[RMDB]
RNA sequence: GGGAACGACUCGAGUAGAGUCGAAAACGAUGCCUCUGUUGUCCUAGCAGAUGUCGUGCUAAACGGCCUCGAGCCUAGGGUAACGGAGCGUCGAUUGAGCAUGUGCAUCAAUGCUGGACACAGGCGGAGAUGUAAUUUCGUUCGCGAGAUUGCAUCUAAAAGAAACAACAACAACAAC
Reactivity to DMS in 0.01 (KOAc 150mM, MgCl2 10mM, bicine 150mM(pH8.5), 24C), signal-to-noise 9, nucleotides 027 to 126: c020g010a010u010g000c160c010u000c000u000g000u000u000g000u000c000c000u000a010g020c010a240g000a010u000g010u000c000g010u000g000c240u050a050a110a020c010g000g000c000c020u000c000g000a130g010c150c020u000a010g000g000g000u000a010a010c010g000g000a010g000c030g000u000c000g000a110u010u010g000a080g000c030a040u010g000u020g000c070a070u010c050a080a110u030g010c080u010g000g010a120c100a030c060a050g000g010c050g000g010
Reactivity to 2A3 in 0.01 (KOAc 150mM, MgCl2 10mM, bicine 150mM(pH8.5), 24C), signal-to-noise 9, nucleotides 027 to 126: c010g010a010u020g010c020c020u000c010u010g010u020u010g010u000c000c000u010a000g000c000a000g000a000u000g000u000c000g000u010g030c080u250a110a050a000c000g000g000c000c000u000c000g000a030g000c000c010u010a010g000g000g010u010a010a010c000g010g000a000g000c000g000u000c000g010a090u020u100g020a010g000c020a020u030g020u050g020c010a030u020c010a030a110u110g010c030u030g030g010a010c010a000c000a020g030g000c010g020g040